[RMDB]
RNA sequence: GGGAACGACUCGAGUAGAGUCGAAAAGAGAGAGAGUUAGACACGGUUGAUCUCACCCUUCGGGGGGGCUAUAGAGAUCACUGGAAGCACUACCGGACAACCGGAACAUUGCAGCAAUGCAGCCCAAAAAAUCCAAACAUCUUCGGAUGUUUGGAAACGCUAAUCAUAACUUCGGUUAUGAUUAGCGAAAAGAAACAACAACAACAAC
Reactivity to DMS in 0.01 (KOAc 150mM, MgCl2 10mM, bicine 150mM(pH8.5), 24C), signal-to-noise 1, nucleotides 027 to 156: g010a100g010a100g000a090g000a130g010u000u010a010g000a250c050a130c060g010g030u000u010g010a010u020c000u000c020a180c000c000c000u020u000c120g000g000g000g000g000g000g010c020u000a120u010a110g020a010g000a040u000c020a030c020u020g000g040a150a140g000c060a120c020u000a270c020c000g040g010a080c140a130a190c000c020g000g000a090a130c080a020u030u000g010c000a070g010c090a100a140u000g040c100a050g050c000c000c030a000a020a080a050a110a160u020c000c000a000a030a000c000a020u000c000u000u020c300g020g010a020u000g010u000u010u010g000g000a000a000a060
Reactivity to 2A3 in 0.01 (KOAc 150mM, MgCl2 10mM, bicine 150mM(pH8.5), 24C), signal-to-noise 2, nucleotides 027 to 156: g110a000g000a000g000a010g020a000g030u080u100a030g070a050c050a020c120g040g020u090u180g010a010u000c010u000c000a040c000c000c000u050u100c250g030g000g010g000g000g010g000c030u070a050u050a130g000a000g000a000u000c000a000c010u010g010g040a040a000g000c030a020c090u070a050c000c010g000g050a080c040a190a260c060c010g010g010a030a030c030a030u070u160g000c020a030g000c020a030a040u030g010c010a000g010c010c010c000a080a090a020a020a000a020u030c020c010a000a000a000c000a000u020c000u040u030c100g100g020a000u000g000u020u020u000g000g000a030a010a000